[RMDB]
RNA sequence: GGGAACGACUCGAGUAGAGUCGAAAAAAAAAAGAUAUGGAUUGAACUACAAGGAACAGGUUCGUUGAAACUAGCUCGGAAACGAGCUAGUGGAGAACCUUAGUACUUGCAAUCCUAAGUCAAAAAACGUAUACAGUUACUUCGGUAACUGUAUACGAAAAGAAACAACAACAACAAC
Reactivity to DMS in 0.01 (KOAc 150mM, MgCl2 10mM, bicine 150mM(pH8.5), 24C), signal-to-noise 1, nucleotides 027 to 126: a000a060a100a080a060a040g000a020u000a300u060g000g000a020u010u010g000a050a090c090u030a300c020a010a030g000g030a170a240c300a040g000g000u000u030c000g040u010u010g000a220a110a010c000u000a000g020c000u000c000g000g000a090a040a140c000g010a010g020c000u000a000g010u000g000g020a020g010a000a000c010c010u000u000a010g020u000a100c000u000u000g030c000a000a000u000c010c000u000a050a140g020u020c000a010a040a140a060a080a080
Reactivity to 2A3 in 0.01 (KOAc 150mM, MgCl2 10mM, bicine 150mM(pH8.5), 24C), signal-to-noise 1, nucleotides 027 to 126: a000a000a020a000a090a000g070a010u130a060u130g030g010a020u000u020g070a130a100c110u200a040c300a010a000g030g010a050a000c000a020g050g050u010u020c020g080u250u010g000a000a010a000c000u020a000g000c010u000c000g040g010a090a040a030c010g010a010g000c000u000a000g010u000g000g000a000g010a010a000c000c000u000u000a010g010u010a000c030u040u000g010c000a000a000u000c010c010u000a160a020g060u020c110a210a000a000a140a000a070
The record gives the reactivity of an RNA of 177 nucleotides to DMS and 2A3. The 2A3 profile rests on 1,840 reads. It was measured as part of the RMDB library TTRDES. DMS adducts were read by reverse transcription with MarathonRT. For DMS, 1,035 sequencing reads were counted.